[RMDB]
RNA sequence: GGGAACGACUCGAGUAGAGUCGAAAAAUGACAUUCUUAUACGUGGAUAAAAAUUUACACAACAAGGUUAUUAACGGUAUCAUAAAUGGCGUUUAUGACGCGCCGUAUGUUGAUUUCAAAGGCAUUUGUGCGGCCAUAAAAUCAACACCAACUGCGCCAUAAUGCGAGAUUUCGAUCUCGCAUUAUGAAAAGAAACAACAACAACAAC
Reactivity to DMS in 0.01 (KOAc 150mM, MgCl2 10mM, bicine 150mM(pH8.5), 24C), signal-to-noise 2, nucleotides 027 to 156: a060u010g000a110c050a120u000u000c020u000u000a120u010a070c060g020u020g010g030a080u010a020a050a110a110a170u010u000u000a110c060a120c030a120a120c080a090a080g020g030u000u000a050u000u000a090a060c030g010g020u000a060u000c070a060u020a020a040a060u010g000g010c000g060u010u000u000a040u020g030a060c040g010c030g020c000c020g020u000a050u010g020u000u000g010a020u030u000u010c030a090a130a100g030g020c010a110u000u010u010g050u000g030c070g010g000c000c010a190u000a000a000a020a030u000c020a000a030c000a030c030c030a080a050c050u000g010c000g000c050
Reactivity to 2A3 in 0.01 (KOAc 150mM, MgCl2 10mM, bicine 150mM(pH8.5), 24C), signal-to-noise 6, nucleotides 027 to 156: a000u120g010a020c000a080u120u000c060u100u170a110u050a200c050g020u050g060g030a050u190a080a180a040a040a020u160u240u260a080c060a010c020a090a050c040a090a040g090g000u050u050a040u060u060a120a010c020g100g050u060a040u090c050a040u130a120a140a040u060g100g020c010g010u000u030u040a050u050g020a010c030g000c010g000c000c000g000u010a020u020g000u000u000g000a000u000u020u050c150a120a070a020g010g000c030a040u050u100u170g130u130g060c070g030g000c010c000a040u150a040a030a000a000u010c000a000a000c010a010c010c020a040a030c010u010g010c000g000c000
This 207-nucleotide RNA was probed chemically with DMS and 2A3. High 2A3 reactivity points to a flexible backbone, as in loops and unpaired stretches. For 2A3 the reverse transcriptase was SuperScript II with manganese. The data come from the RNA Mapping Database (RMDB), library OK3TST. DMS adducts were read by reverse transcription with MarathonRT.